This 177-nucleotide RNA was probed chemically with 2A3 and DMS. Values cover nucleotides 27 to 126.
RNA sequence: GGGAACGACUCGAGUAGAGUCGAAAACGGCUCGCCCCUCAAACUCGCCAAUCGAAGCGCCGGUUGCCCCGAAGAGAGCGACGAUCUGGGUCGCGCCAAGAAGCACGCCGCCCACGAGGGCGACGUAAGCUACGCGAUCAUUCGUGAUCGCGUAGCUAAAAGAAACAACAACAACAAC
Reactivity to 2A3 in 0.01 (KOAc 150mM, MgCl2 10mM, bicine 150mM(pH8.5), 24C), signal-to-noise 2, nucleotides 027 to 126: c030g000g000c070u160c030g020c020c000c030c010u090c040a130a170a050c040u070c100g010c000c000a030a030u010c040g090a060a020g040c000g020c020c000g030g050u000u080g040c000c020c000c010g090a140a070g140a010g000a000g060c010g050a100c050g040a160u000c070u070g050g010g010u040c020g010c010g000c000c000a040a090g040a060a000g060c090a020c000g010c020c030g030c000c050c000a160c170g130a300g000g010g000c000g010a000c020g000u020a020
Reactivity to DMS in 0.01 (KOAc 150mM, MgCl2 10mM, bicine 150mM(pH8.5), 24C), signal-to-noise 1, nucleotides 027 to 126: c190g000g010c010u020c080g040c030c060c000c000u010c170a000a080a030c220u000c000g000c010c050a060a120u000c170g000a070a160g050c030g000c050c090g010g000u000u020g000c000c150c020c050g000a130a200g000a060g040a080g040c000g000a080c000g050a110u050c170u000g000g000g120u000c020g030c040g000c090c060a050a090g000a060a060g070c040a020c000g090c050c000g000c000c010c000a240c290g000a120g000g000g000c000g000a000c030g000u000a050
For DMS, 1,102 sequencing reads were counted. 2A3 adducts were read by reverse transcription with SuperScript II with manganese.